[RMDB]
Structure probing data (2A3 and DMS) for a 177-nucleotide construct.
DMS adducts were read by reverse transcription with MarathonRT.
The 2A3 profile rests on 2,300 reads.
2A3 adducts were read by reverse transcription with SuperScript II with manganese.
The reactions ran in a buffer of 150 mM KOAc, 10 mM MgCl2 and 150 mM bicine (pH 8.5), at 24 C.
RNA sequence: GGGAACGACUCGAGUAGAGUCGAAAACCGAUCCGAGGGGCCCGACGCCCUGAUUGGAGGGCACUCCGGGCCGAAGGGUUGAGUAGCACUCAGAGGGAGAAAAUCACACAGAGAUGAGCAGAAAAAUGAUGUAAUUUAGGUUCGCCUAAAUUACAUCAAAAGAAACAACAACAACAAC
Reactivity to 2A3 in 0.01 (KOAc 150mM, MgCl2 10mM, bicine 150mM(pH8.5), 24C), signal-to-noise 2, nucleotides 027 to 126: c000c010g010a060u020c020c020g040a080g050g200g030g030c000c000c000g030a010c000g030c030c010c030u030g000a090u010u300g090g080a000g010g000g010c030a020c050u120c090c050g000g000g000c000c000g000a000a000g020g000g000u000u010g000a010g000u060a010g030c060a020c020u050c060a010g010a050g050g050g040a040g060a090a060a040a040u100c030a040c010a020c040a060g040a010g010a120u080g040a000g000c030a040g180a050a110a010a010a020u120
Reactivity to DMS in 0.01 (KOAc 150mM, MgCl2 10mM, bicine 150mM(pH8.5), 24C), signal-to-noise 3, nucleotides 027 to 126: c010c020g000a010u000c030c040g000a220g030g010g010g000c020c020c020g000a110c170g000c000c000c000u000g020a090u010u010g020g000a020g010g000g010c010a030c050u000c070c020g000g000g010c020c010g000a080a120g010g010g020u000u000g010a090g010u000a070g010c070a140c030u000c050a060g010a100g000g010g010a070g000a080a030a060a100u000c080a080c050a060c080a070g000a080g000a060u000g010a080g000c060a090g000a030a060a040a110a140u000